[RMDB]
RNA sequence: GGGAACGACUCGAGUAGAGUCGAAAAGCAAGAUAGAGGAGCCCCCGUGACGCUGGCAGCAUCGCGGACUGGGAGAAGAGAGGCGAAGAAAAGAAGGGGAGUCCCCGAUCGAAUGUCCAUAGGCAGACAACAGUAGAUACUUCGGUAUCUACUGUUGAAAAGAAACAACAACAACAAC
Reactivity to DMS in 0.01 (KOAc 150mM, MgCl2 10mM, bicine 150mM(pH8.5), 24C), signal-to-noise 2, nucleotides 027 to 126: g030c060a030a060g010a120u010a100g020a100g020g000a130g010c030c040c040c020c010g000u000g010a060c050g000c050u010g010g010c170a100g010c020a060u000c060g000c050g010g000a080c100u020g010g010g010a060g010a080a070g000a070g000a090g000g000c040g020a060a050g000a080a080a090a070g020a080a060g020g000g010g000a120g010u000c050c010c000c060g000a050u010c050g010a070a060u010g010u010c040c070a050u010a090g000g030c080a060g020a200
Reactivity to 2A3 in 0.01 (KOAc 150mM, MgCl2 10mM, bicine 150mM(pH8.5), 24C), signal-to-noise 1, nucleotides 027 to 126: g040c020a000a030g040a110u150a060g050a110g080g030a050g000c000c000c000c000c020g030u030g020a020c040g070c030u000g030g110c040a010g020c000a020u030c020g000c010g000g020a010c030u060g020g000g030a100g010a110a010g000a010g010a020g010g030c050g000a030a010g040a010a110a010a010g080a040a050g000g000g020g000a020g100u040c050c020c000c010g000a030u110c030g030a090a040u090g010u040c020c010a040u060a090g040g030c030a000g020a070